[RMDB]
RNA sequence: GGGAACGACUCGAGUAGAGUCGAAAAUUGCAAGCCUUCGGGCUUGCAAGGUGUCGGAAUGCGGAAUAUAUAAUCCUCCGCUUAAGGAUUAUACCCACUUAAGUGCCAGGCUGUUCGCAGCCUGGAAUGUCACAACUUUAUUCGUAAAGUUGUGACAAAAAGAAACAACAACAACAAC
Reactivity to 2A3 in 0.01 (KOAc 150mM, MgCl2 10mM, bicine 150mM(pH8.5), 24C), signal-to-noise 2, nucleotides 027 to 126: u010u000g000c000a000a020g010c010c000u070u040c240g090g000g000c000u010u030g020c000a010a000g020g000u030g000u020c030g010g120a150a030u140g000c010g020g040a060a010u070a010u040a020u040a200a090u070c010c040u000c020c010g020c000u010u030a030a010g030g000a000u110u030a030u170a140c000c000c000a060c030u100u210a150a080g060u060g150c010c000a000g010g000c000u010g030u060u050c190g040c110a000g010c000c000u010g010g010a010a000
Reactivity to DMS in 0.01 (KOAc 150mM, MgCl2 10mM, bicine 150mM(pH8.5), 24C), signal-to-noise 3, nucleotides 027 to 126: u020u000g010c000a010a010g000c000c000u000u010c200g030g000g020c000u000u000g020c000a000a000g010g010u010g000u000c020g000g010a160a080u000g000c010g010g010a080a060u000a150u000a060u010a120a080u000c150c080u000c070c080g000c080u000u010a060a150g010g000a010u010u000a090u000a100c010c010c010a090c230u010u010a080a110g010u000g010c010c000a010g000g010c010u000g030u000u000c180g030c020a020g000c000c000u000g010g000a010a020
Source: RMDB library M2PK50, as collected in RNAgym. Structure probing data (2A3 and DMS) for a 177-nucleotide construct. For 2A3, 2,451 sequencing reads were counted. Reactivities are rounded to 0.1 and cut off at 0 and 3. 2A3 adducts were read by reverse transcription with SuperScript II with manganese. Reactivities are given for positions 27 through 126. For DMS, 3,342 sequencing reads were counted.